[RMDB]
RNA sequence: GGGAACGACUCGAGUAGAGUCGAAAAUGGCUUCAUUUCCUGAAUGAUGAACUCGCGUCUGGAAUGGGACUUGAUGCACUUCGAAACUCUCAUCCAAUCGAAGUUGAAAUUGAUAAUCCGAAUGAGACCUAUACUGCGCUUUCGAGCGCAGUAUAGGAAAAGAAACAACAACAACAAC
Reactivity to 2A3 in 0.01 (KOAc 150mM, MgCl2 10mM, bicine 150mM(pH8.5), 24C), signal-to-noise 2, nucleotides 027 to 126: u040g050g000c000u040u020c020a020u010u060u010c000c010u020g090a080a090u120g040a020u050g030a060a120c020u020c130g120c060g050u020c030u030g060g130a150a170u160g060g000g000a010c010u040u040g010a020u040g000c020a000c020u020u020c020g040a070a050a020c040u030c010u030c030a010u050c010c050a050a060u030c000g030a030a000g000u030u060g040a020a050a000u080u080g020a030u080a180a060u050c030c000g040a060a050u010g020a010g000a020
Reactivity to DMS in 0.01 (KOAc 150mM, MgCl2 10mM, bicine 150mM(pH8.5), 24C), signal-to-noise 2, nucleotides 027 to 126: u010g030g000c030u020u010c010a030u000u000u000c000c010u010g000a080a150u000g010a090u000g000a010a120c120u020c170g020c080g070u000c020u000g010g010a180a110u000g000g010g000a040c050u000u000g000a080u000g000c050a020c020u000u000c040g010a020a060a160c170u000c050u000c020a040u000c040c080a070a230u000c010g000a040a020g010u000u000g000a040a040a060u000u000g000a110u000a130a060u000c050c070g010a060a070u010g000a040g000a290